[RMDB]
RNA sequence: GGGAACGACUCGAGUAGAGUCGAAAAGGCUGCGUAUCACUCUAGGGUACGUGAUAGUGCGAUAUAAGAAGCACUGGUACAUGCCGGCAGGGACAGUUAAGAGAGGGCCGCAGUCUCGUGUCCCUGCAAAAGGAGUUCUCGUUCGCGAGAACUCCAACCGUACAAAAACGUUCGCGUUUUUGUACGGAAAAGAAACAACAACAACAAC
Reactivity to DMS in 0.01 (KOAc 150mM, MgCl2 10mM, bicine 150mM(pH8.5), 24C), signal-to-noise 1, nucleotides 027 to 156: g010g030c000u010g000c020g030u000a070u010c030a080c100u000c100u000a150g030g020g010u000a020c000g050u000g010a110u000a030g030u000g020c000g030a140u000a230u030a130a110g010a160a290g000c010a000c020u020g030g010u000a070c090a060u000g000c010c000g000g020c000a050g000g010g010a030c010a070g000u000u010a090a130g020a080g030a060g030g020g000c080c080g000c040a140g010u000c000u010c040g000u010g000u000c000c020c000u000g000c040a030a010a070a140g020g000a010g030u000u000c000u000c000g010u000u000c240g020c000g000a030g000a000a010c000u010c010c000a000a050
Reactivity to 2A3 in 0.01 (KOAc 150mM, MgCl2 10mM, bicine 150mM(pH8.5), 24C), signal-to-noise 3, nucleotides 027 to 156: g010g000c010u020g000c030g010u020a070u090c050a120c200u130c130u150a140g140g000g000u010a030c030g000u030g020a080u110a070g000u010g000c030g020a020u040a010u070a300a080g140a110a020g000c000a000c010u000g010g030u110a070c030a040u140g040c010c000g010g000c000a010g010g000g010a010c010a070g020u210u190a190a010g040a000g010a020g030g060g030c030c040g000c070a030g050u010c000u010c000g050u040g000u020c010c000c010u000g000c000a000a000a000a010g000g000a010g000u000u000c000u000c000g020u050u020c130g000c020g090a000g000a000a000c000u000c000c000a000a000
The record gives the reactivity of an RNA of 207 nucleotides to DMS and 2A3. For 2A3 the reverse transcriptase was SuperScript II with manganese. Reactivities are given for positions 27 through 156. For DMS, 2,528 sequencing reads were counted. The RNA was probed in 150 mM KOAc, 10 mM MgCl2 and 150 mM bicine (pH 8.5) at 24 C. The 2A3 profile rests on 2,295 reads. Source: RMDB library M2RFPK, as collected in RNAgym.